[RMDB]
RNA sequence: GGGAACGACUCGAGUAGAGUCGAAAAGUAUCGAGAGGACUUUCAGAUGGAUGAAGGAGAGGAUCCUAGCCUCCUGUUCCAGUCAUACCUGGACAAUGUUGGAGUCCAAAUAGUCAGACAAAUAAGGACCCUGUACGAUAUUCGUAUCGUACAGGGUAAAAGAAACAACAACAACAAC
Reactivity to 2A3 in 0.01 (KOAc 150mM, MgCl2 10mM, bicine 150mM(pH8.5), 24C), signal-to-noise 4, nucleotides 027 to 126: g030u030a120u190c100g040a090g050a070g080g040a000c000u070u120u050c090a070g060a070u120g070g030a030u060g100a060a000g080g020a080g000a000g090g020a090u040c000c000u040a070g090c000c000u030c000c010u050g010u030u020c010c000a010g010u050c030a100u140a210c030c010u000g000g000a010c000a020a230u210g020u120u090g050g030a030g010u000c010c000a020a020a020u180a030g090u110c050a030g020a090c040a050a120a110u110a110a040g100g020
Reactivity to DMS in 0.01 (KOAc 150mM, MgCl2 10mM, bicine 150mM(pH8.5), 24C), signal-to-noise 7, nucleotides 027 to 126: g020u020a070u010c070g000a120g010a150g010g010a030c010u000u010u020c070a100g000a100u010g000g010a050u020g010a110a020g000g010a030g000a130g020g000a110u010c020c040u010a140g000c060c010u000c000c000u000g000u010u000c000c000a050g000u010c110a090u040a060c220c070u000g000g000a020c060a080a070u030g010u010u010g000g000a090g000u010c000c010a040a080a120u030a070g000u010c140a140g000a090c090a050a080a120u050a140a150g010g010